RNA sequence: GGGAACGACUCGAGUAGAGUCGAAAAGAAAUGCGAUUCUGUAUUAAGGGCACUCGUGGUUCUUUUAUGAAAUUUGGGUUUGACCCACAAGAGUCACAAUUACAUUCAGGAAUGAAGCCUAACGAUACUAGUGGAUUAUAUUCGUAUAAUCCACUAGAAAAGAAACAACAACAACAAC
Reactivity to DMS in 0.01 (KOAc 150mM, MgCl2 10mM, bicine 150mM(pH8.5), 24C), signal-to-noise 8, nucleotides 027 to 126: g000a060a060a060u000g020c050g000a050u000u000c030u000g010u010a110u000u010a100a140g000g010g010c060a040c090u010c110g020u000g010g010u000u000c010u010u000u000u010a070u010g010a060a060a100u010u010u010g010g010g010u000u010u010g010a140c010c000c010a070c240a050a060g010a030g010u000c010a030c050a050a060u010u000a090c140a140u000u000c040a040g010g020a080a090u000g000a050a060g010c010c010u010a060a100c200g000a130u000a090
Reactivity to 2A3 in 0.01 (KOAc 150mM, MgCl2 10mM, bicine 150mM(pH8.5), 24C), signal-to-noise 6, nucleotides 027 to 126: g040a000a070a010u090g010c040g050a080u070u040c030u070g040u070a080u040u130a080a080g000g010g000c020a010c040u070c060g060u090g050g000u020u010c020u040u110u040u060a140u110g090a050a100a100u110u070u040g020g000g030u070u140u250g090a090c000c030c000a010c020a020a030g020a010g050u020c010a000c000a050a020u110u100a040c020a060u030u080c030a000g000g120a070a050u080g030a020a010g010c010c030u050a100a020c060g000a020u030a100